[RMDB]
RNA sequence: GGGAACGACUCGAGUAGAGUCGAAAAGAAAGAAAGAAGAAUCACCAGUAGGCAAGGAUCCUCAACUACGUUAUUCGGGCACCUUGAGUUGAGAGGAGCUAGUGGUGCGCCCGGCCUGGAGAUCAAAACACGACAGGCGGGUUCGCCCGCCUGUCAAGUUGCGCAUAUUGUUCGCAAUAUGCGCAACAAAAGAAACAACAACAACAAC
Reactivity to 2A3 in 0.01 (KOAc 150mM, MgCl2 10mM, bicine 150mM(pH8.5), 24C), signal-to-noise 1, nucleotides 027 to 156: g080a050a150a000g030a030a120a040g030a050a040g010a030a050u050c000a000c010c000a000g050u060a070g060g000c060a100a160g000g010a010u020c000c000u000c000a000a010c000u240a170c050g090u110u120a080u210u120c000g000g000g040c030a100c000c070u060u180g040a000g000u030u010g020a000g000a020g040g000a010g000c000u010a000g150u070g010g000u000g040c040g000c000c020c020g000g010c000c000u040g040g070a060g010a030u140c020a040a070a050a010c110a030c140g000a000c000a000g010g000c030g010g000g000u000u000c030g100c020c000c040g020c060c000u000g000u000c000a000a000